Record summary
The record gives the reactivity of an RNA of 177 nucleotides to DMS. The RNA was probed in 150 mM KOAc, 10 mM MgCl2 and 150 mM bicine (pH 8.5) at 24 C.

RNA sequence: GGGAACGACUCGAGUAGAGUCGAAAAGAAUUUCUUAUAUCUCAAGAUAGUCAUGUAUCUAAUGUGAUGAUUUCCAGUGAUGACUGUAAGGAGGUUUAUUUAGAUUCAAUAUAUAUCACUGUAGGACUACACUAGACCCUUUCGAGGGUCUAGUGUAAAAAGAAACAACAACAACAAC
Reactivity to DMS in 0.01 (KOAc 150mM, MgCl2 10mM, bicine 150mM(pH8.5), 24C), signal-to-noise 1, nucleotides 027 to 126: g000a060a070u000u010u040c060u030u000a070u000a040u010c000u000c020a070a040g010a060u010a040g000u000c080a030u010g020u010a080u010c010u000a050a070u000g000u010g000a040u000g000a130u000u000u000c060c050a080g040u000g010a030u000g000a030c040u000g040u040a110a080g010g010a050g000g000u000u000u010a040u010u000u000a060g000a060u000u000c000a060a060u000a090u000a110u010a090u000c060a030c040u010g020u000a090g020g010a160c130